[RMDB]
RNA sequence: GGGAACGACUCGAGUAGAGUCGAAAAACGAGUCCGUACGCGGACCCGAAGGGCCCCAGAAGACCAAGGGGCCCAAACCUACCACUCAUUAGAUGCAUGGAAAUCACUAGGUGAUACGUCACCUAGAACACGCUUUUAAGCUUCGGCUUAAAAGCAAGAUCAUUCCUGUCUUCGGACAGGAAUGAUCAAAAGAAACAACAACAACAAC
Reactivity to 2A3 in 0.01 (KOAc 150mM, MgCl2 10mM, bicine 150mM(pH8.5), 24C), signal-to-noise 1, nucleotides 027 to 156: a000c000g060a030g000u010c030c010g000u000a030c260g010c020g060g000a000c010c000c030g030a150a200g000g000g000c000c000c000c000a080g010a300a070g060a220c100c070a180a100g000g000g000g000c000c000c020a000a000a000c000c060u030a000c000c000a030c060u190c020a030u020u170a090g050a120u050g100c080a040u010g130g030a070a110a110u250c040a110c030u000a020g000g010u000g030a050u010a020c230g010u000c010a000c000c000u000a000g000a000a000c030a010c150g000c010u080u000u000u000a000a000g000c000u050u140c050g100g000c010u000u000a000a000a000a000g000c010a000a000
The data come from the RNA Mapping Database (RMDB), library M2RFPK. An RNA of 207 nucleotides, treated with 2A3 and read out base by base. For 2A3, 408 sequencing reads were counted. The RNA was probed in 150 mM KOAc, 10 mM MgCl2 and 150 mM bicine (pH 8.5) at 24 C.